An RNA of 177 nucleotides, treated with DMS and 2A3 and read out base by base.
The RNA was probed in 150 mM KOAc, 10 mM MgCl2 and 150 mM bicine (pH 8.5) at 24 C.
For DMS the reverse transcriptase was MarathonRT.
It was measured as part of the RMDB library RFMREP.
RNA sequence: GGGAACGACUCGAGUAGAGUCGAAAACUCGUCCUGGCACAUUUCCUAUCCUGGAAUAUUAGUGCAGACGCAUUGCACUGUUUGGCCCAUCCGUACGCCGCUUCUCCCCUCUCCUCACGGUUGGGGGCCGUGAUGAAUUGUUCGCAAUUCAUCACGGAAAAGAAACAACAACAACAAC
Reactivity to DMS in 0.01 (KOAc 150mM, MgCl2 10mM, bicine 150mM(pH8.5), 24C), signal-to-noise 1, nucleotides 027 to 126: c050u010c060g000u000c000c080u000g000g000c000a010c070a090u000u000u000c000c000u020a140u010c220c130u000g000g020a030a100u010a100u000u000a030g020u000g000c010a030g010a090c140g010c150a060u000u000g010c010a030c040u000g010u000u000u010g020g050c010c000c030a050u000c040c050g020u010a120c090g010c000c040g000c100u000u030c020u000c030c030c000c030u000c020u000c010c030u000c120a100c140g010g020u000u000g000g000g010g010g030
Reactivity to 2A3 in 0.01 (KOAc 150mM, MgCl2 10mM, bicine 150mM(pH8.5), 24C), signal-to-noise 1, nucleotides 027 to 126: c020u030c020g050u030c000c020u030g140g000c030a010c000a060u020u040u040c000c010u050a080u050c020c120u050g000g040a070a040u120a100u150u230a070g020u010g000c040a010g090a070c070g000c070a090u030u180g010c010a000c050u040g010u130u090u150g050g000c020c010c010a030u070c020c000g030u030a040c040g000c040c000g100c060u070u060c000u010c030c020c000c000u040c010u000c010c000u010c000a030c030g030g000u040u020g030g010g000g000g010